[RMDB]
RNA sequence: GGGAACGACUCGAGUAGAGUCGAAAAGGUCCUCUAUCAUCGAGGGAGGCACAGAAAGCCCUCUGGACUGAGAACAUCUGAGGUUUCCUGUGGCUCAGAGAAGGGCAGGGUCGCUGAAAGUGCACGGGCACCCUAUGGGAUUCGUCCCAUAGGGUGCAAAAGAAACAACAACAACAAC
Reactivity to 2A3 in 0.01 (KOAc 150mM, MgCl2 10mM, bicine 150mM(pH8.5), 24C), signal-to-noise 3, nucleotides 027 to 126: g090g030u060c020c000u000c010u030a240u100c060a070u070c050g040a020g030g070g010a090g030g000c010a040c010a030g170a020a020a010g030c010c050c000u050c010u050g080g020a080c040u120g020a020g050a170a050c060a150u060c040u120g010a020g040g020u030u050u140c020c010u070g040u100g050g000c000u000c020a010g010a000g040a110a020g030g000g010c040a010g030g030g000u090c060g000c060u050g040a040a000a100g050u050g030c020a030c090g010g070
Reactivity to DMS in 0.01 (KOAc 150mM, MgCl2 10mM, bicine 150mM(pH8.5), 24C), signal-to-noise 2, nucleotides 027 to 126: g000g030u010c050c010u000c030u040a110u050c170a100u000c040g030a040g000g000g000a070g010g040c060a010c000a030g010a270a110a080g010c040c000c010u000c010u010g010g020a050c090u010g010a060g040a070a120c190a080u010c020u010g030a010g020g000u000u010u010c100c040u030g040u010g000g000c040u000c010a050g020a110g000a100a110g000g000g010c020a020g000g000g000u010c130g000c010u000g000a070a080a140g000u000g020c000a100c150g000g010

Structure probing data (2A3 and DMS) for a 177-nucleotide construct. For 2A3, 1,645 sequencing reads were counted. Conditions: 150 mM KOAc, 10 mM MgCl2 and 150 mM bicine (pH 8.5), 24 C. 2A3 is a SHAPE reagent: it acylates the 2'-hydroxyl of flexible nucleotides of all four kinds. For DMS, 3,086 sequencing reads were counted.